[RMDB]
The record gives the reactivity of an RNA of 207 nucleotides to 2A3.
Source: RMDB library M2RFPK, as collected in RNAgym.
Conditions: 150 mM KOAc, 10 mM MgCl2 and 150 mM bicine (pH 8.5), 24 C.

RNA sequence: GGGAACGACUCGAGUAGAGUCGAAAAGAUAAGCUAGCAGCAAAAAGGAACCGAUCCCCACCAAGUUCGGAAAGAGAUACCGGGCGAGGCGCUGAAGAAAGAAUCUCGCUUCAGACACCCCAAGGACAUGACCUUAAAAUGUUCGCAUUUUAAGGAAACAUAACCGAGUGUUCGCACUCGGUUAUGUAAAAGAAACAACAACAACAAC
Reactivity to 2A3 in 0.01 (KOAc 150mM, MgCl2 10mM, bicine 150mM(pH8.5), 24C), signal-to-noise 1, nucleotides 027 to 156: g040a080u070a190a000g020c070u060a020g030c030a000g030c020a020a050a080a080a000g080g020a070a030c020c040g030a070u050c030c020c000c000a000c010c050a020a130g000u010u020c010g020g040a240a060a000g100a020g000a010u100a070c000c040g010g030g000c030g010a030g010g040c010g000c070u060g020a020a050g060a020a240a010g030a090a120u040c060u060c220g000c000u020u010c010a000g100a070c010a080c040c010c000c010a060a060g060g000a020c020a090u110g090a090c000c020u000u000a010a010a010a010u030g000u070u050c260g000c090a000u010u020u000u000a000a000g000g000a020a020